[RMDB]
Structure probing data (2A3) for a 207-nucleotide construct.
RNA sequence: GGGAACGACUCGAGUAGAGUCGAAAAGCUGGUCGGUGACGACCAGCAACGAUCAGAGUGCUGAUCGAAACGUGCAUUCAAAGACGCUCGAAGCACGAACAAGCGACGCAGAGCGUCAAAGCCAGAGAGGGCAUAACAAAAAUAAAAAGGCGUCGCAGACGUCAACUAGCUUCGGCUAGUUGACGUCAAAAGAAACAACAACAACAAC
Reactivity to 2A3 in 0.01 (KOAc 150mM, MgCl2 10mM, bicine 150mM(pH8.5), 24C), signal-to-noise 2, nucleotides 027 to 156: g000c000u000g000g000u000c010g010g080u030g040a090c000g000a000c000c000a000g020c000a000a000c000g000a000u000c000a000g130a040g150u190g190c010u030g000a010u020c010g000a080a060a000c000g000u000g010c060a220u010u090c040a120a030a110g020a010c000g010c010u000c020g000a050a010g030c000a010c030g020a050a000c070a110a010g000c010g000a000c010g040c000a000g000a000g020c010g000u000c000a000a010a000g000c020c000a030g020a020g030a110g240g000g070c020a000u110a050a090c120a000a170a090a060a010u160a130a000a010a010a000g120g000c000g000u000c000g000c000a000

For 2A3 the reverse transcriptase was SuperScript II with manganese.